Structure probing data (DMS and 2A3) for a 207-nucleotide construct. The reactions ran in a buffer of 150 mM KOAc, 10 mM MgCl2 and 150 mM bicine (pH 8.5), at 24 C. For 2A3 the reverse transcriptase was SuperScript II with manganese. As a SHAPE reagent, 2A3 marks flexible, mostly unpaired nucleotides at the ribose 2'-OH. For DMS the reverse transcriptase was MarathonRT. The 2A3 profile rests on 1,381 reads.

[RMDB]
RNA sequence: GGGAACGACUCGAGUAGAGUCGAAAAACAACAUGCCCAGGUAGCCCAGACCUUCAAGGCUACGGUGCGUUGCGACGCACGGUCUGGUUCUUCACAACGACGUUCACCGCGUCUUCUUCCAUCCCCCUCCAGCGCACGAAGUUCGCUUCGUGCGCAACGUACACCAAAUGUUCGCAUUUGGUGUACGAAAAGAAACAACAACAACAAC
Reactivity to DMS in 0.01 (KOAc 150mM, MgCl2 10mM, bicine 150mM(pH8.5), 24C), signal-to-noise 1, nucleotides 027 to 156: a080c060a070a130c070a080u010g000c000c010c040a110g000g000u010a000g010c070c010c110a090g010a090c050c010u030u000c030a100a200g020g050c000u010a010c000g020g030u000g030c050g050u000u000g030c070g030a100c050g000c020a020c050g000g040u040c020u000g000g010u010u010c050u000u000c010a120c090a050a130c020g000a110c000g040u000u000c060a100c080c100g010c010g000u010c020u000u000c030u000u000c010c020a100u020c040c030c000c010c020u010c030c020a200g020c030g000c010a010c010g000a090a030g040u010u010c300g030c020u000u000c010g070u000g000c000g000c010a020a010
Reactivity to 2A3 in 0.01 (KOAc 150mM, MgCl2 10mM, bicine 150mM(pH8.5), 24C), signal-to-noise 2, nucleotides 027 to 156: a000c120a020a000c010a060u180g000c030c000c010a010g040g000u020a020g010c040c020c060a010g010a000c000c010u010u000c010a020a010g010g000c020u010a000c000g010g000u020g000c000g000u060u100g070c160g150a020c000g010c000a010c000g010g010u000c000u000g000g010u120u070c090u140u140c080a070c040a240a110c130g040a000c010g050u110u190c070a040c090c030g000c030g020u000c040u070u040c050u110u020c030c040a180u160c020c010c000c000c000u020c010c020a000g020c000g000c020a000c010g000a010a000g010u020u040c070g020c060u000u000c000g000u000g020c020g010c000a010a000